This 177-nucleotide RNA was probed chemically with DMS and 2A3. The data come from the RNA Mapping Database (RMDB), library OK2TST. 2A3 adducts were read by reverse transcription with SuperScript II with manganese.
RNA sequence: GGGAACGACUCGAGUAGAGUCGAAAAUACCUCGGCGUCCAAGCAGCUCGCCAGCGGCAACCUCGCCGUCAAGCUGCCGGUGACCUCCAACGACGAGUUCGGCACCCUGGCGACGAGCUUCAACGAACCCUGAGUAAAUCUUCGGAUUUACUCAGGGAAAAGAAACAACAACAACAAC
Reactivity to DMS in 0.01 (KOAc 150mM, MgCl2 10mM, bicine 150mM(pH8.5), 24C), signal-to-noise 2, nucleotides 027 to 126: u000a120c070c030u000c040g010g000c120g020u010c060c100a100a240g000c070a070g020c160u010c070g000c100c060a090g040c100g010g010c060a100a080c260c100u000c080g050c010c000g000u000c040a060a060g010c140u000g050c020c010g040g000u010g000a080c210c040u000c010c060a100a150c240g000a110c200g000a160g010u000u000c020g050g040c050a050c050c000c100u000g000g020c000g010a010c030g010a080g050c050u000u000c090a010a140c160g010a120a170
Reactivity to 2A3 in 0.01 (KOAc 150mM, MgCl2 10mM, bicine 150mM(pH8.5), 24C), signal-to-noise 1, nucleotides 027 to 126: u090a010c010c010u000c040g040g010c010g050u000c030c000a030a080g020c020a000g000c040u040c060g010c040c030a040g010c000g060g000c030a050a090c040c060u100c090g000c010c010g000u000c000a020a010g050c030u030g020c020c030g000g060u120g070a190c000c020u020c010c010a160a090c060g100a040c050g020a040g050u070u070c040g010g000c010a000c000c000c060u020g010g000c000g000a010c010g010a010g000c000u110u060c090a140a070c000g060a050a060